RNA sequence: GGGAACGACUCGAGUAGAGUCGAAAAACACCAAAACUGAAAACGGAAGGCAACCCUUCCACGACGAUACUUACUUUCCUUUGAUCGUCGUUACUACUGGCAUAGCCACAAAGGAGAACAAACAUGAGCGCGGACACUGACUUCGGUCAGUGUCCAAGUAUAAACAUACCUUCGGGUAUGUUUAUACAAAAGAAACAACAACAACAAC
Reactivity to DMS in 0.01 (KOAc 150mM, MgCl2 10mM, bicine 150mM(pH8.5), 24C), signal-to-noise 3, nucleotides 027 to 156: a120c060a210c030c020a070a080a080a300c090u040g000a060a070a080a070c050g020g040a050a040g060g050c130a100a190c200c010c010u010u000c000c020a110c040g000a040c000g000a050u000a060c070u000u000a050c130u010u010u000c030c040u010u000u010g000a020u000c030g040u000c010g020u000u000a070c060u000a080c060u020g000g040c040a120u010a170g020c000c040a060c080a050a060a050g000g030a110g010a040a200c110a100a070a150c080a100u000g030a160g000c050g000c090g030g010a040c000a000c000u000g010a020c010u000u010c260g040g020u010c000a030g030u000g020u000c000c010a000a020
Reactivity to 2A3 in 0.01 (KOAc 150mM, MgCl2 10mM, bicine 150mM(pH8.5), 24C), signal-to-noise 9, nucleotides 027 to 156: a000c090a110c030c050a090a080a060a090c150u220g070a090a090a040a070c060g000g010a010a000g010g020c140a080a100c020c000c000u000u010c000c000a000c000g000a000c000g010a000u090a160c030u070u020a030c030u080u150u070c010c010u040u020u020g020a000u000c000g000u000c000g010u040u050a030c030u030a030c020u010g020g000c060a240u120a140g020c020c000a030c050a030a040a010g040g030a030g030a060a030c050a100a110a020c060a120u230g090a060g120c130g000c090g030g000a000c000a000c000u000g000a000c000u020u050c130g050g000u000c010a000g000u000g000u000c000c000a000a000